[RMDB]
Source information
This 177-nucleotide RNA was probed chemically with DMS and 2A3. The DMS profile rests on 2,559 reads. It was measured as part of the RMDB library M2PK90. For 2A3, 1,451 sequencing reads were counted.
RNA sequence: GGGAACGACUCGAGUAGAGUCGAAAAAAAAAGGACCUACAGCCGAGCGAGUGACUGAAAACGGCAAAGUCACGAAGCAUCGUUAAACCUAAAUGGUCGUAGCGAAAUAAGAGUUGUUCCCAGUAAAUUGAUUUUAGUAUUUCGAUACUAAAAUCAAAAAAGAAACAACAACAACAAC
Reactivity to DMS in 0.01 (KOAc 150mM, MgCl2 10mM, bicine 150mM(pH8.5), 24C), signal-to-noise 3, nucleotides 027 to 126: a030a050a070a130a080g010g010a020c020c010u000a030c060a190g010c180c050g000a070g030c010g000a300g010u000g000a000c000u000g010a050a030a060a080c060g000g010c110a070a070a010g010u000c010a010c010g000a120a090g000c020a120u000c010g000u000u000a040a150a030c030c000u010a070a070a040u010g020g000u000c090g010u010a060g010c020g010a050a080a100u020a060a120g000a040g000u000u000g000u000u000c000c000c000a080g020u010a000a050a140
Reactivity to 2A3 in 0.01 (KOAc 150mM, MgCl2 10mM, bicine 150mM(pH8.5), 24C), signal-to-noise 1, nucleotides 027 to 126: a000a000a000a000a000g160g000a030c000c000u010a000c000a030g090c060c030g100a010g030c020g010a030g030u010g010a000c000u020g090a100a040a080a040c080g100g030c110a040a110a010g000u010c000a000c000g030a050a020g000c040a090u040c010g000u040u040a040a040a020c000c010u130a240a170a120u150g010g010u020c050g100u010a010g000c000g060a070a160a030u130a120a060g000a000g000u000u000g000u000u000c000c000c000a000g000u010a000a030a060